[RMDB]
RNA sequence: GGGAACGACUCGAGUAGAGUCGAAAACGUAGGUUCGCCUACGGUGAUUUCCUAAGUCGAACCUUUGAUCGUCGGUGGACAUGCCAUAUCGGAAACGAUAUGGCAACAGCCACCCGACGGGAGGUUCGAUAUGGACCUAUGGCGCCUUCGGGCGCAAUAAUUUGUUGUGCUUCGGCACAACAAAUUAAAAAGAAACAACAACAACAAC
Reactivity to 2A3 in 0.01 (KOAc 150mM, MgCl2 10mM, bicine 150mM(pH8.5), 24C), signal-to-noise 1, nucleotides 027 to 156: c000g010u000a000g010g060u030u050c290g080c100c010u000a020c020g030g030u070g030a230u000u110u040c000c020u020a110a010g020u010c010g010a000a000c000c030u100u110u090g190a240u270c020g000u000c000g000g020u000g000g000a110c090a170u040g000c010c010a000u000a000u000c040g020g020a050a080a100c020g000a000u000a000u000g000g000c000a020a020c010a000g000c010c000a020c060c010c040g020a010c000g000g030g020a000g000g000u000u010c000g000a010u010a020u010g040g020a020c000c000u230a220u300g110g000c010g000c000c000u080u030c280g090g000g040c000g000c000a000a000